Chemical mapping of a 177-nucleotide RNA with DMS. Reactivities are given for positions 27 through 126. The data come from the RNA Mapping Database (RMDB), library TTRINS.
RNA sequence: GGGAACGACUCGAGUAGAGUCGAAAAGAUAUGGACAGCGCAGAUACGGGUCUUGGGACUUGAGUAUUUGGUCGGAAACGACCAUGUACAAUGAUGGUCCCAAGACCCGAGUAGCUGUCCUAAGUCAUCCCGGUAAAAGGUUCGCCUUUUACCGGGAAAAAGAAACAACAACAACAAC
Reactivity to DMS in 0.01 (KOAc 150mM, MgCl2 10mM, bicine 150mM(pH8.5), 24C), signal-to-noise 1, nucleotides 027 to 126: g040a060u000a300u000g000g000a070c000a000g000c010g020c270a190g000a140u000a030c030g000g010g010u000c000u000u020g030g000g000a030c000u000u010g000a300g000u110a000u000u000u000g030g040u000c010g060g030a110a110a220c010g030a020c000c000a000u000g030u000a000c000a210a250u030g040a190u000g010g000u000c000c000c000a030a000g000a010c000c020c000g000a000g020u000a090g030c020u000g000u000c000c000u000a000a090g020u000c050a120